[RMDB]
RNA sequence: GGGAACGACUCGAGUAGAGUCGAAAAGAUUUUGAUAUGCACCGCGUAGAUGAUCGAUCGCGUUACGACGCGCUUGCAUCCAUUGAAUCGCACGUGGAUCGACAUAAAAAUCGACCCCUUCGGGCACGGAGAACUAUAUGUUCGCAUAUAGUUCUCCAAAAGAAACAACAACAACAAC
Reactivity to 2A3 in 0.01 (KOAc 150mM, MgCl2 10mM, bicine 150mM(pH8.5), 24C), signal-to-noise 8, nucleotides 027 to 126: g010a000u030u040u060u100g120a080u060a010u120g010c010a020c030c010g000c010g010u020a040g000a120u060g010a030u030c010g000a010u020c010g000c010g010u010u050a100c240g040a010c010g020c000g000c020u000u040g020c040a030u020c080c010a070u070u180g110a150a090u100c060g010c110a010c010g000u020g020g020a090u120c100g090a090c010a010u060a020a070a000a000a000u020c010g040a070c010c010c010c000u070u160c070g010g020g020c100a020c150
Reactivity to DMS in 0.01 (KOAc 150mM, MgCl2 10mM, bicine 150mM(pH8.5), 24C), signal-to-noise 9, nucleotides 027 to 126: g010a020u000u010u010u000g010a190u010a030u000g010c020a300c130c020g010c010g020u000a160g000a040u000g000a050u000c030g000a020u000c010g010c020g010u000u000a090c170g020a030c010g000c010g000c210u000u000g000c130a020u010c050c220a130u010u000g010a110a090u010c090g000c140a030c030g030u000g000g010a020u010c020g010a250c020a020u000a020a020a020a040a030u000c010g010a180c050c000c000c150u000u010c070g010g000g010c200a090c210

The record gives the reactivity of an RNA of 177 nucleotides to 2A3 and DMS.
Conditions: 150 mM KOAc, 10 mM MgCl2 and 150 mM bicine (pH 8.5), 24 C.
2A3 adducts were read by reverse transcription with SuperScript II with manganese.
The DMS profile rests on 13,039 reads.
Source: RMDB library OK2TST, as collected in RNAgym.